Chemical mapping of a 177-nucleotide RNA with DMS and 2A3.
It was measured as part of the RMDB library TTRDEL.
Conditions: 150 mM KOAc, 10 mM MgCl2 and 150 mM bicine (pH 8.5), 24 C.
For 2A3, 5,961 sequencing reads were counted.
Values cover nucleotides 27 to 126.
RNA sequence: GGGAACGACUCGAGUAGAGUCGAAAAGAUAUGGACGUACAUCAGCCACACUCGGAAACGAGUGAAUGGCGACGACGUACUGUCCUAAGUCAAAAUCUAUGUACAGGGUUCGCCCUGUACAUAGAAACUUUAUAUGGACCUUCGGGUCCAUAUAAAGAAAAGAAACAACAACAACAAC
Reactivity to DMS in 0.01 (KOAc 150mM, MgCl2 10mM, bicine 150mM(pH8.5), 24C), signal-to-noise 3, nucleotides 027 to 126: g000a030u000a300u010g000g020a020c010g000u000a000c000a070u000c000a150g020c020c010a050c010a010c000u000c000g000g010a060a070a160c010g010a010g020u000g000a080a080u000g010g000c010g010a080c200g010a040c040g000u000a000c000u020g030u000c000c010u000a020a070g000u000c020a090a070a100a140u010c000u000a000u000g010u000a000c000a000g010g000g050u000u010c280g010c000c000c000u000g000u000a000c000a000u000a000g000a010a070a090
Reactivity to 2A3 in 0.01 (KOAc 150mM, MgCl2 10mM, bicine 150mM(pH8.5), 24C), signal-to-noise 3, nucleotides 027 to 126: g030a010u050a040u110g010g000a000c010g000u010a010c020a050u030c040a040g020c000c000a010c000a000c000u010c000g040g010a060a040a020c020g020a000g040u020g040a090a240u050g010g000c020g030a030c060g000a000c020g020u000a020c180u280g020u030c000c000u000a050a040g030u000c030a000a020a000a290u020c010u010a000u000g000u010a000c000a000g030g000g050u060u160c180g200c010c000c020u000g000u000a000c000a000u000a000g000a000a020a000